RNA sequence: GGGAACGACUCGAGUAGAGUCGAAAAGAUAUGGAUUAGCCGUACCAGCGAGGAUCUCGGAAACGAGGGAGCUGACGGAACUACUAAUCCUAAGUCAAACCUAUGGUCGGUUCGCCGACCAUAGGAACCCUAGUACGCUGUUCGCAGCGUACUAGGGAAAAGAAACAACAACAACAAC
Reactivity to DMS in 0.01 (KOAc 150mM, MgCl2 10mM, bicine 150mM(pH8.5), 24C), signal-to-noise 1, nucleotides 027 to 126: g000a050u020a300u010g000g000a020u010u000a000g000c000c000g000u010a070c300c030a010g000c010g000a080g020g010a000u000c000u010c000g000g000a080a100a190c000g030a000g000g000g000a040g020c000u000g040a010c020g000g020a030a010c080u000a300c000u000a000a000u000c000c000u000a050a170g020u000c020a160a100a190c010c000u000a000u010g020g000u000c010g020g000u000u020c180g050c020c030g020a000c040c010a000u040a000g000g000a000a020
Reactivity to 2A3 in 0.01 (KOAc 150mM, MgCl2 10mM, bicine 150mM(pH8.5), 24C), signal-to-noise 2, nucleotides 027 to 126: g050a020u110a040u230g000g000a010u020u000a010g000c020c000g050u090a270c180c000a010g040c020g060a280g060g010a030u020c000u010c020g040g040a080a110a040c010g010a010g050g020g000a000g040c000u000g020a020c020g030g020a050a090c100u300a020c000u000a220a020u050c000c000u030a150a020g060u040c070a140a030a100c010c000u010a010u000g000g000u010c030g020g050u100u080c210g020c120c000g000a010c010c000a000u020a000g000g000a000a000

Background
An RNA of 177 nucleotides, treated with DMS and 2A3 and read out base by base. For DMS the reverse transcriptase was MarathonRT. The reactions ran in a buffer of 150 mM KOAc, 10 mM MgCl2 and 150 mM bicine (pH 8.5), at 24 C. For 2A3 the reverse transcriptase was SuperScript II with manganese. Values cover nucleotides 27 to 126. It was measured as part of the RMDB library TTRDEL.